Chemical mapping of a 207-nucleotide RNA with 2A3 and DMS. Source: RMDB library OK3TST, as collected in RNAgym. Reactivities are rounded to 0.1 and cut off at 0 and 3.

RNA sequence: GGGAACGACUCGAGUAGAGUCGAAAAAGUGGCAGGUCUCGAAUUUGAAACGGGCUCCUACAUCGUCCAAAAGGGAGACCGCAUCGCUCAAGGCAUCAUCGCUCCAGUAGAGCGUGCGGAGUUUACCGUAGUUGGUGAGCUUAGCGAAACGAAACGCAAUUGCAAUUUGGUUCGCCAAAUUGCAAUUAAAAGAAACAACAACAACAAC
Reactivity to 2A3 in 0.01 (KOAc 150mM, MgCl2 10mM, bicine 150mM(pH8.5), 24C), signal-to-noise 2, nucleotides 027 to 156: a000g060u060g030g050c070a020g010g030u030c010u000c010g090a130a110u070u060u200g040a080a090a000c060g010g010g000c040u050c030c010u080a080c060a180u160c060g070u000c040c020a000a040a000a090g110g010g000a040g000a000c010c000g000c000a020u140c050g000c010u040c050a050a090g030g040c040a070u040c020a030u170c210g030c040u060c060c040a110g130u130a020g070a000g010c000g000u010g010c000g010g030a080g010u030u140u080a030c010c010g000u030a030g030u030u040g020g000u010g000a040g000c020u030u130a010g010c010g070a160a020a020c050g050a080a050a040c040g050c040
Reactivity to DMS in 0.01 (KOAc 150mM, MgCl2 10mM, bicine 150mM(pH8.5), 24C), signal-to-noise 2, nucleotides 027 to 156: a070g010u000g010g030c090a100g030g010u000c000u060c010g000a100a170u000u000u010g010a130a090a130c040g000g010g030c050u000c010c010u000a110c080a110u000c130g040u010c090c030a040a060a090a180g010g000g020a070g000a080c030c010g000c000a110u000c050g040c020u010c020a060a100g010g050c030a100u000c090a160u000c060g000c000u010c000c010a100g050u020a230g000a020g000c010g010u010g000c030g030g000a050g000u000u010u000a010c020c030g010u010a180g000u000u000g020g020u000g010a040g000c030u000u000a070g030c030g010a060a080a140c120g020a020a090a080c100g020c140
For DMS, 2,512 sequencing reads were counted. DMS adducts were read by reverse transcription with MarathonRT.